[RMDB]
RNA sequence: GGGAACGACUCGAGUAGAGUCGAAAAGUGCGGCCGUCGCGGCUAUGGUUUCACUAGCCACUUCGACCGUGUUUCAUCAUUUUAACAUCACGGGCAGGGAGCUCACUAUGUGGGCUGGACGAGACCACACUCGAGUUUUAUUCGUAAAACUCGAGUGAAAAGAAACAACAACAACAAC
Reactivity to DMS in 0.01 (KOAc 150mM, MgCl2 10mM, bicine 150mM(pH8.5), 24C), signal-to-noise 6, nucleotides 027 to 126: g010u000g010c010g000g000c000c010g040u000c060g030c030g020g000c010u000a020u000g020g010u000u000u030c150a150c230u000a020g000c000c000a030c010u000u000c010g000a020c000c010g020u010g010u000u010u000c050a120u030c120a110u010u010u010u020a080a130c120a060u010c090a080c100g000g000g020c050a100g010g000g010a050g010c010u000c010a020c020u020a100u010g030u010g000g000g000c000u000g010g010a090c050g000a120g000a110c040c040a300
Reactivity to 2A3 in 0.01 (KOAc 150mM, MgCl2 10mM, bicine 150mM(pH8.5), 24C), signal-to-noise 5, nucleotides 027 to 126: g050u030g010c040g010g000c020c010g000u020c010g000c020g020g000c010u020a080u180g080g060u060u300u210c090a110c050u010a010g000c000c000a020c010u020u030c020g020a010c010c000g020u020g040u030u050u030c060a120u020c030a050u040u100u110u220a090a060c040a050u100c060a020c110g020g020g000c020a020g030g010g060a010g000c010u070c030a010c040u200a130u300g020u020g000g000g010c000u010g000g070a010c010g010a020g030a060c010c000a010
The record gives the reactivity of an RNA of 177 nucleotides to DMS and 2A3. The data come from the RNA Mapping Database (RMDB), library OK2TST. Conditions: 150 mM KOAc, 10 mM MgCl2 and 150 mM bicine (pH 8.5), 24 C. For 2A3, 6,438 sequencing reads were counted.